[RMDB]
An RNA of 177 nucleotides, treated with DMS and read out base by base. It was measured as part of the RMDB library OK2TRN.
RNA sequence: GGGAACGACUCGAGUAGAGUCGAAAACAUCCACUGCUACGGCAGUGGAUGAACGAGGUAGGUACGCCUACCUCGAAAGGUGGAUGUUGUCAUAGACAUUAAACGUCCAUGGUACGCCAUGGACGAAAUAUCACGCUCGAUUCGUCGAGCGUGAUAUAAAAGAAACAACAACAACAAC
Reactivity to DMS in 0.01 (KOAc 150mM, MgCl2 10mM, bicine 150mM(pH8.5), 24C), signal-to-noise 2, nucleotides 027 to 126: c010a000u010c000c000a010c010u000g000c000u000a230c220g030g030c000a020g060u000g020g000a000u000g030a070a120c020g020a010g000g030u000a000g020g010u000a080c300g000c000c000u000a000c000c000u030c000g030a000a020a060g000g010u000g000g010a050u000g000u000u000g010u000c120a180u010a260g030a040c050a050u000u020a050a090a200c060g020u000c010c000a000u000g010g020u000a110c300g060c000c000a000u000g000g000a000c000g000a000a020

For DMS the reverse transcriptase was MarathonRT.